This 177-nucleotide RNA was probed chemically with DMS and 2A3. The 2A3 profile rests on 6,899 reads. 2A3 is a SHAPE reagent: it acylates the 2'-hydroxyl of flexible nucleotides of all four kinds.
RNA sequence: GGGAACGACUCGAGUAGAGUCGAAAAACGCCUCCAACAAGCAAGAGGUUGCUGUCGAGCUGAUCCGCCUGCUGAGUGACCUUAUCGAACGUGUGCUGAACGCGGAAUAAACAAUCAUCGCAAGGGGCGAUGGAUGAGAAUUCGUUCUCAUCCAUCGAAAAGAAACAACAACAACAAC
Reactivity to DMS in 0.01 (KOAc 150mM, MgCl2 10mM, bicine 150mM(pH8.5), 24C), signal-to-noise 9, nucleotides 027 to 126: a120c180g010c030c010u000c020c050a080a080c120a090a100g020c090a110a100g000a080g000g000u000u000g010c030u000g010u010c090g010a090g010c030u000g000a080u000c030c040g010c030c030u010g000c030u000g000a070g020u000g020a060c050c030u000u000a070u000c080g010a090a100c080g010u000g000u000g010c090u000g010a070a090c090g000c030g010g010a080a080u010a060a070a090c140a050a070u000c050a050u000c050g010c050a080a110g000g000g000g010
Reactivity to 2A3 in 0.01 (KOAc 150mM, MgCl2 10mM, bicine 150mM(pH8.5), 24C), signal-to-noise 5, nucleotides 027 to 126: a000c050g030c010c010u010c030c010a100a100c040a080a020g130c030a050a030g020a010g160g000u050u030g010c010u050g080u120c060g070a020g010c030u030g020a050u030c020c030g010c020c020u040g000c020u040g040a030g060u030g010a040c000c000u080u100a120u170c040g040a080a070c030g040u060g000u010g050c050u040g030a060a020c040g000c010g020g080a050a050u160a070a030a010c050a030a080u090c030a020u070c030g000c060a030a050g010g000g030g000